[RMDB]
RNA sequence: GGGAACGACUCGAGUAGAGUCGAAAACACUGUGUGAGUCUGAGUGAGACAGUCUCUGAGACACUGACACAGUCUGAGUGAGAGUGUCAGACACUCUCACACAGUCACAGUGUGUCACUCUGACAGAAGCUGCUGAUAGUUUCGACUAUCAGCAGCUAAAAGAAACAACAACAACAAC
Reactivity to 2A3 in 0.01 (KOAc 150mM, MgCl2 10mM, bicine 150mM(pH8.5), 24C), signal-to-noise 2, nucleotides 027 to 126: c020a020c020u010g020u060g060u030g190a050g050u000c030u050g030a020g010u040g020a050g060a030c060a060g080u030c030u020c020u100g060a050g020a090c020a010c060u040g080a020c010a010c020a090g000u000c020u000g040a050g010u000g000a000g010a000g000u020g040u100c100a010g090a120c010a000c010u000c000u000c020a010c000a000c000a000g020u030c020a000c020a100g050u040g010u020g030u070c010a010c060u040c010u020g100a030c040a070g100a120
Reactivity to DMS in 0.01 (KOAc 150mM, MgCl2 10mM, bicine 150mM(pH8.5), 24C), signal-to-noise 3, nucleotides 027 to 126: c060a070c080u000g000u020g010u000g000a110g010u000c020u000g000a070g020u000g030a090g000a150c090a170g000u010c050u000c090u010g000a070g000a070c070a110c080u000g040a080c060a050c060a070g010u010c020u000g010a050g030u000g010a040g000a020g040u000g000u010c240a180g050a300c000a000c010u000c000u010c010a000c000a030c010a010g010u000c090a090c120a050g000u000g000u010g000u000c030a020c010u000c030u000g000a100c020a070g000a100
Chemical mapping of a 177-nucleotide RNA with 2A3 and DMS. For 2A3 the reverse transcriptase was SuperScript II with manganese. Values cover nucleotides 27 to 126. For 2A3, 2,041 sequencing reads were counted. It was measured as part of the RMDB library OK2TRN.